Chemical mapping of a 207-nucleotide RNA with 2A3.
As a SHAPE reagent, 2A3 marks flexible, mostly unpaired nucleotides at the ribose 2'-OH.

RNA sequence: GGGAACGACUCGAGUAGAGUCGAAAAGCAAUCUCGGCACUUUGGGGGGCCAAGGCAGGCGGCUGGGAGGUGGAGGCUGCAGCGAGCCGAGAUCACGCCACUGCACUCCAGCCUGGGCACCAUUGAGCACUGAGUUAACGAGACUCUGUCUGCAAUCCGAUGUAGGGUUUUUCGAAACCCUACAUCGAAAAGAAACAACAACAACAAC
Reactivity to 2A3 in 0.01 (KOAc 150mM, MgCl2 10mM, bicine 150mM(pH8.5), 24C), signal-to-noise 1, nucleotides 027 to 156: g010c040a140a130u060c010u040c040g010g030c020a040c110u110u240u120g020g000g000g060g040g000c000c000a040a000g020g000c070a060g060g000c000g040g020c040u070g010g040g040a090g000g010u050g040g020a020g080g000c040u100g060c040a030g040c020g120a000g030c070c000g010a020g000a040u060c020a000c060g100c020c000a070c000u010g000c020a100c040u000c010c000a000g030c010c000u000g050g010g050c010a050c040c000a050u060u110g060a000g000c040a010c060u130g020a040g030u090u080a130a040c150g060a040g020a070c050u040c040u130g000u060c010u010g010c050a040a080u030c050